[RMDB]
RNA sequence: GGGAACGACUCGAGUAGAGUCGAAAACUUUACAUCUUCUUAUCCAAAGAAGAAGGGUUAGAAUGUACCGUGUUUUACGGAAGUUCCAUUCCCGUAGGGUUACAAUGUGUUGCUAGAAUAAACCGUAGUGAAAGGUAGGAUUCGUCCUACCUUUCACAAAAGAAACAACAACAACAAC
Reactivity to DMS in 0.01 (KOAc 150mM, MgCl2 10mM, bicine 150mM(pH8.5), 24C), signal-to-noise 6, nucleotides 027 to 126: c020u000u010u000a050c140a220u010c000u010u000c000u000u000a060u050c290c180a080a050a030g030a010a010g020a150a300g010g000g000u000u000a060g000a010a010u000g000u030a300c000c010g010u000g000u020u030u040u030a000c000g010g000a070a300g000u000u000c000c110a130u010u010c000c000c000g020u010a050g000g010g000u000u000a110c150a070a080u020g000u010g000u020u000g000c050u010a070g000a090a090u020a060a060a100c050c030g000u020a160
Reactivity to 2A3 in 0.01 (KOAc 150mM, MgCl2 10mM, bicine 150mM(pH8.5), 24C), signal-to-noise 2, nucleotides 027 to 126: c040u090u080u100a060c050a120u050c010u040u010c000u000u000a080u030c120c030a160a020a000g000a010a000g000a000a040g020g050g010u000u100a000g060a020a060u050g030u200a050c000c000g010u050g080u080u260u120u230a000c000g010g040a050a040g000u000u000c000c020a050u070u020c000c010c010g010u090a090g000g040g120u030u020a090c130a170a070u140g030u000g030u170u060g040c100u020a070g040a270a070u210a170a030a030c040c020g090u110a110
An RNA of 177 nucleotides, treated with DMS and 2A3 and read out base by base.
For DMS the reverse transcriptase was MarathonRT.
The reactions ran in a buffer of 150 mM KOAc, 10 mM MgCl2 and 150 mM bicine (pH 8.5), at 24 C.